[RMDB]
RNA sequence: GGGAACGACUCGAGUAGAGUCGAAAAAGUUCUAGUCCUCACCUAAGAUCAGACUAACAAGGCCCUCAAAGUAAGAGCACUAGGUUGGGCUUUGUGGUGGGGAUCAGUGUCUCAUUUUUAGUCCCAAAUUAAAAACGAGAUUUUGGGCUGUACAUCAUGCAUUAGUCGUAUUCGUACGACUAAUGCAAAAAGAAACAACAACAACAAC
Reactivity to DMS in 0.01 (KOAc 150mM, MgCl2 10mM, bicine 150mM(pH8.5), 24C), signal-to-noise 1, nucleotides 027 to 156: a120g030u000u000c010u000a050g020u000c010c020u000c030a070c010c010u000a070a220g010a150u000c060a100g060a130c070u010a050a130c040a030a030g000g010c000c010c000u000c060a060a040a120g000u000a070a140g020a150g040c090a050c080u000a090g030g010u000u000g030g010g000c020u000u000u000g020u010g050g040u030g010g010g080g010a030u000c030a020g070u030g030u000c000u030c010a030u000u000u000u000u000a030g010u000c040c010c080a130a050a150u010u010a030a030a020a010a010c010g010a060g010a190u010u000u010u000g010g000g010c160u000g060u000a020c070a170u000c030a250
Reactivity to 2A3 in 0.01 (KOAc 150mM, MgCl2 10mM, bicine 150mM(pH8.5), 24C), signal-to-noise 1, nucleotides 027 to 156: a000g050u130u030c050u020a000g000u080c000c000u030c000a020c000c010u090a050a050g000a210u150c070a040g000a010c100u060a010a000c000a000a000g000g000c000c000c000u030c040a100a110a000g040u020a160a010g020a030g190c020a000c050u100a060g190g000u100u010g000g000g030c000u000u000u020g020u000g000g000u000g100g000g000g000a000u010c000a000g010u010g040u000c000u000c040a110u130u050u000u030u240a000g040u150c000c000c050a000a000a020u100u100a060a090a050a090a050c080g040a050g000a180u130u000u000u030g000g000g100c000u040g100u210a100c060a180u250c010a110